The record gives the reactivity of an RNA of 207 nucleotides to 2A3 and DMS. Source: RMDB library OK3TST, as collected in RNAgym. For DMS, 2,728 sequencing reads were counted. DMS adducts were read by reverse transcription with MarathonRT. The reactions ran in a buffer of 150 mM KOAc, 10 mM MgCl2 and 150 mM bicine (pH 8.5), at 24 C.
RNA sequence: GGGAACGACUCGAGUAGAGUCGAAAACGUCUAUCAGCGAUCCCUCGAGGGAGUCCUCGAGGUCCCGGAGGUCGAUCUUCGAUGAGCCUGCUGCGACGCGACGACUGGCUGGGUGAUCCAUGGCAGGACUGACGAUCACUCGAGAGCGAUCGCGAGCUCCCUUAUUCAUCUUCGGAUGAAUAAGGGAAAAAGAAACAACAACAACAAC
Reactivity to 2A3 in 0.01 (KOAc 150mM, MgCl2 10mM, bicine 150mM(pH8.5), 24C), signal-to-noise 3, nucleotides 027 to 156: c030g030u030c060u090a200u080c040a030g000c010g010a010u000c000c000c020u000c000g010a010g010g050g040a050g070u050c000c020u030c050g070a080g000g020u010c000c000c010g020g010a010g000g010u040c040g070a300u020c060u110u060c060g120a110u090g080a050g040c050c070u120g050c130u170g010c060g040a040c060g000c030g050a070c020g030a040c040u050g070g170c010u000g000g040g000u100g100a070u040c010c050a120u130g110g000c080a020g000g010a040c010u060g040a060c090g120a110u130c080a030c110u000c000g000a010g010a010g020c100g000a020u000c000g000c000g000a010g000c000
Reactivity to DMS in 0.01 (KOAc 150mM, MgCl2 10mM, bicine 150mM(pH8.5), 24C), signal-to-noise 1, nucleotides 027 to 156: c090g040u010c050u030a050u000c070a220g040c010g030a070u000c050c030c000u000c010g010a060g020g010g010a170g010u000c020c010u000c050g050a300g000g020u000c000c000c010g040g000a270g030g000u000c010g000a040u000c030u010u000c090g000a180u000g000a120g000c070c020u000g000c050u010g000c000g020a180c090g000c050g000a120c010g010a090c000u020g020g000c080u020g000g030g020u020g000a090u000c000c020a060u000g030g000c060a040g030g030a180c020u000g000a130c010g000a150u000c010a070c000u000c030g000a190g010a070g020c070g000a030u000c010g040c010g000a020g000c100